An RNA of 207 nucleotides, treated with 2A3 and read out base by base.
For 2A3, 713 sequencing reads were counted.
2A3 adducts were read by reverse transcription with SuperScript II with manganese.
Values cover nucleotides 27 to 156.
The RNA was probed in 150 mM KOAc, 10 mM MgCl2 and 150 mM bicine (pH 8.5) at 24 C.
RNA sequence: GGGAACGACUCGAGUAGAGUCGAAAAGCCGGGGGAGCUCCCUCCCCGUCCUUGUCUUUUCUUAUUAUUCCUCGGAUGUUUCCCAGCCAGGGAUUGUCCUCCUCAAGUCUCUUGAGAGUCUUGUUGACCUUCCGGAGAUCCCUCUCGAGCUCCUCCUCAUAAUACAAUGCUUCGGCAUUGUAUUAUGAAAAGAAACAACAACAACAAC
Reactivity to 2A3 in 0.01 (KOAc 150mM, MgCl2 10mM, bicine 150mM(pH8.5), 24C), signal-to-noise 1, nucleotides 027 to 156: g160c080c000g000g020g000g000g000a020g010c000u000c020c000c000u000c000c000c010c000g040u000c000c000u100u100g060u040c040u080u130u160u060c070u120u230a250u170u080a080u150u210c020c010u030c090g000g050a050u050g080u040u090u000c010c000c020a000g010c070c050a030g000g010g000a010u000u040g070u010c030c010u010c010c000u010c020a020a000g050u000c000u000c030u240u300g140a170g000a010g300u000c010u060u100g020u020u040g090a130c020c060u100u180c080c030g000g010a010g000a030u000c000c020c000u030c020u070c030g000a000g010c010u020c020c000u030c000c000u000